[RMDB]
The record gives the reactivity of an RNA of 177 nucleotides to DMS and 2A3. It was measured as part of the RMDB library OK2TRN. Reactivities are rounded to 0.1 and cut off at 0 and 3. The RNA was probed in 150 mM KOAc, 10 mM MgCl2 and 150 mM bicine (pH 8.5) at 24 C. For DMS, 1,683 sequencing reads were counted.

RNA sequence: GGGAACGACUCGAGUAGAGUCGAAAAAGAGGGAUCCUGGAGAGUGGGGGACUCACCUCAACAGCACUCUCUAAGGGGUAAGGAGCCCCUGGCAUCAGGAGCUACCAGAGCACCUGCUACGUGCCAGCUUUCAUCACGAUUUCGAUCGUGAUGAAAGAAAAGAAACAACAACAACAAC
Reactivity to DMS in 0.01 (KOAc 150mM, MgCl2 10mM, bicine 150mM(pH8.5), 24C), signal-to-noise 3, nucleotides 027 to 126: a060g010a160g000g010g020a080u000c060c030u000g000g000a040g000a010g020u000g010g010g000g000g000a190c200u010c300a110c030c020u020c040a080a120c170a150g020c060a040c010u010c020u000c010u000a100a050g000g000g000g010u000a080a070g000g010a150g000c010c010c020c000u000g010g000c030a050u000c030a000g000g010a040g010c010u010a130c220c190a110g000a090g000c010a140c000c020u000g010c300u020a030c210g030u000g000c010c010a070g010
Reactivity to 2A3 in 0.01 (KOAc 150mM, MgCl2 10mM, bicine 150mM(pH8.5), 24C), signal-to-noise 1, nucleotides 027 to 126: a000g070a030g000g020g000a040u020c010c010u020g030g000a010g010a010g000u060g020g000g020g010g040a060c040u060c210a230c000c000u030c010a080a100c040a080g120c010a010c020u040c000u000c010u030a160a090g040g000g030g010u050a030a060g050g060a050g020c020c020c010c000u000g000g040c030a020u100c010a010g000g000a030g000c020u060a160c040c090a030g090a030g240c000a020c030c010u020g050c020u060a050c050g050u000g010c010c000a000g000